Overview: Chemical mapping of a 170-nucleotide RNA with DMS and 2A3. For 2A3 the reverse transcriptase was SuperScript II with manganese. The DMS profile rests on 6,096 reads. The reactions ran in a buffer of 150 mM KOAc, 10 mM MgCl2 and 150 mM bicine (pH 8.5), at 24 C. Reactivities are given for positions 27 through 129.

[RMDB]
RNA sequence: GGGAACGACUCGAGUAGAGUCGAAAACUCAACACAAGAGUUCAGAUUCAUGACUGCUAACAAUCUAACUGCACCUAGAAAUUCUUGGGAGGCUAUGGCUCUGAACUUUAAGUUAAUAGGUAUUGGCGCAGCGUGCGGUUCGCCGCACGCAAAAGAAACAACAACAACAAC
Reactivity to DMS in 0.01 (KOAc 150mM, MgCl2 10mM, bicine 150mM(pH8.5), 24C), signal-to-noise 2, nucleotides 027 to 129: c040u000c030a020a110c220a150c110a270a030g000a020g020u030u000c050a010g050a080u050u000c020a090u000g020a090c010u000g040c030u000a060a060c170a020a040u030c000u030a010a100c120u050g080c060a110c080c050u030a040g010a070a120a080u010u010c020u000u000g000g050g020a080g000g010c100u030a080u000g020g040c090u030c020u000g030a020a030c070u020u000u000a040a060g020u020u030a000a000u000a120g020g000u030a050u000u000g030g010c050g030c130a120
Reactivity to 2A3 in 0.01 (KOAc 150mM, MgCl2 10mM, bicine 150mM(pH8.5), 24C), signal-to-noise 3, nucleotides 027 to 129: c000u010c010a010a030c050a020c030a100a020g000a000g030u000u020c000a000g000a040u040u010c000a000u000g080a070c040u010g000c010u060a090a040c040a040a070u020c020u120a030a090c070u150g070c100a040c030c000u020a020g040a040a190a050u160u100c030u050u060g020g010g000a000g000g000c090u020a000u050g000g000c000u000c000u000g000a000a000c000u010u010u070a040a010g000u000u090a060a030u050a070g100g010u110a050u060u140g030g000c030g030c020a030